[RMDB]
RNA sequence: GGGAACGACUCGAGUAGAGUCGAAAAUGAAAUAAAGCGCACCAAGAUCGAGGUGCGCAACCAGCGUGUCCAUGGAUCACGCAUCCACGCGUCUACCAAGACGCGAAAGGUAUUACAAAUAAAAAAACAUUUAUGUUGUGUUCGCACAACAUAAAUGAAAAGAAACAACAACAACAAC
Reactivity to 2A3 in 0.01 (KOAc 150mM, MgCl2 10mM, bicine 150mM(pH8.5), 24C), signal-to-noise 4, nucleotides 027 to 126: u060g020a040a020a020u190a050a120a040g000c000g000c000a000c000c010a070a050g080a200u230c110g090a050g000g000u000g000c000g000c000a000a010c020c010a010g020c010g000u020g010u000c080c020a170u200g070g000a050u120c000a000c010g010c020a020u030c000c000a060c020g010c000g010u010c010u020a160c040c020a060a000g010a010c010g010c010g000a040a010a010g000g000u020a050u100u140a060c060a020a150a040u290a130a100a030a000a000a020a020
Reactivity to DMS in 0.01 (KOAc 150mM, MgCl2 10mM, bicine 150mM(pH8.5), 24C), signal-to-noise 3, nucleotides 027 to 126: u000g000a120a070a150u000a050a060a160g000c020g020c010a020c010c010a140a130g030a180u010c200g020a110g000g000u020g000c000g020c010a000a030c070c080a070g010c020g030u000g000u010c050c100a110u010g030g010a030u010c020a020c010g010c000a090u000c010c020a180c030g010c000g030u000c000u000a130c300c300a080a040g000a010c000g000c010g000a000a080a060g000g010u000a040u030u000a080c090a070a080a090u050a010a030a020a050a050a030a130
The record gives the reactivity of an RNA of 177 nucleotides to 2A3 and DMS.
The DMS profile rests on 2,105 reads.
It was measured as part of the RMDB library M2PK90.
The 2A3 profile rests on 5,002 reads.
The reactions ran in a buffer of 150 mM KOAc, 10 mM MgCl2 and 150 mM bicine (pH 8.5), at 24 C.